An RNA of 177 nucleotides, treated with DMS and 2A3 and read out base by base. The reactions ran in a buffer of 150 mM KOAc, 10 mM MgCl2 and 150 mM bicine (pH 8.5), at 24 C.
[RMDB]
RNA sequence: GGGAACGACUCGAGUAGAGUCGAAAAGCAAUACAAGUCUGACGGAACAAUAAUUUCAAAUUCUGCACUUAUUGAUAUACAAGAACGAAUGUACAUUACAGUUAAAGCUAUUCCACCAGCAGGUAACCCACCGAGUCUAAUUCGUUAGACUCGGUGGAAAAGAAACAACAACAACAAC
Reactivity to DMS in 0.01 (KOAc 150mM, MgCl2 10mM, bicine 150mM(pH8.5), 24C), signal-to-noise 1, nucleotides 027 to 126: g000c050a020a080u000a090c070a090a110g000u000c020u000g000a060c220g000g010a050a200c050a150a080u050a020a120u040u070u000c080a020a100a150u000u030c200u000g000c100a020c030u000u000a030u000u000g000a060u010a150u000a050c140a050a090g000a080a050c250g010a060a050u000g000u010a080c170a000u000u000a030c090a130g000u000u000a080a010a090g000c010u000a030u000u000c000c030a090c070c010a030g000c020a050g000g000u000a090a140c190
Reactivity to 2A3 in 0.01 (KOAc 150mM, MgCl2 10mM, bicine 150mM(pH8.5), 24C), signal-to-noise 1, nucleotides 027 to 126: g040c000a050a000u060a110c020a090a090g040u000c030u020g090a090c060g050g080a070a030c010a050a020u180a060a060u060u170u150c050a060a110a140u250u000c020u070g010c020a040c050u030u030a000u150u090g020a000u030a000u010a150c100a110a000g060a100a000c030g090a110a000u030g080u080a020c010a060u140u020a000c010a050g110u010u020a130a070a020g010c010u010a030u080u090c020c020a060c000c000a010g000c000a010g000g010u000a040a010c040